RNA sequence: GGGAACGACUCGAGUAGAGUCGAAAAAGAUAUGGAGAGAAGCAAGGCCCGAAACAGCGAAGAACAGAGCUCGGAAACGAGCUCUGGGAGCUGAGAUAGCUGGCUGAUGACCUUCUCUCCUAAGUCAGCUUAUACUCCUGUUCGCAGGAGUAUAAGCAAAAGAAACAACAACAACAAC
Reactivity to DMS in 0.01 (KOAc 150mM, MgCl2 10mM, bicine 150mM(pH8.5), 24C), signal-to-noise 1, nucleotides 027 to 126: a100g000a050u000a300u000g000g020a030g000a020g010a000a000g030c050a060a100g000g050c050c000c090g000a150a300a110c020a020g020c000g000a200a140g030a080a220c000a010g010a000g000c000u010c020g000g010a100a080a190c000g000a000g000c000u000c000u000g020g000g000a070g000c020u000g020a030g000a120u000a230g000c150u020g010g010c000u000g010a060u000g000a160c300c000u000u000c000u010c000u000c010c010u000a000a080g020u000c030a070
Reactivity to 2A3 in 0.01 (KOAc 150mM, MgCl2 10mM, bicine 150mM(pH8.5), 24C), signal-to-noise 1, nucleotides 027 to 126: a010g050a040u090a020u090g000g000a000g010a010g010a050a000g010c050a110a210g080g000c020c010c030g030a100a120a020c020a010g000c030g240a300a030g000a100a010c010a000g000a010g040c020u050c000g030g030a080a030a050c000g000a000g000c010u000c010u000g010g030g000a010g000c000u000g000a000g080a150u180a020g240c210u050g050g030c010u070g050a300u140g030a100c000c000u000u000c000u000c020u030c000c000u010a010a000g020u030c000a010
Annotation
Chemical mapping of a 177-nucleotide RNA with DMS and 2A3. 2A3 adducts were read by reverse transcription with SuperScript II with manganese. Reactivities are given for positions 27 through 126. Conditions: 150 mM KOAc, 10 mM MgCl2 and 150 mM bicine (pH 8.5), 24 C. The data come from the RNA Mapping Database (RMDB), library TTRDES. As a SHAPE reagent, 2A3 marks flexible, mostly unpaired nucleotides at the ribose 2'-OH.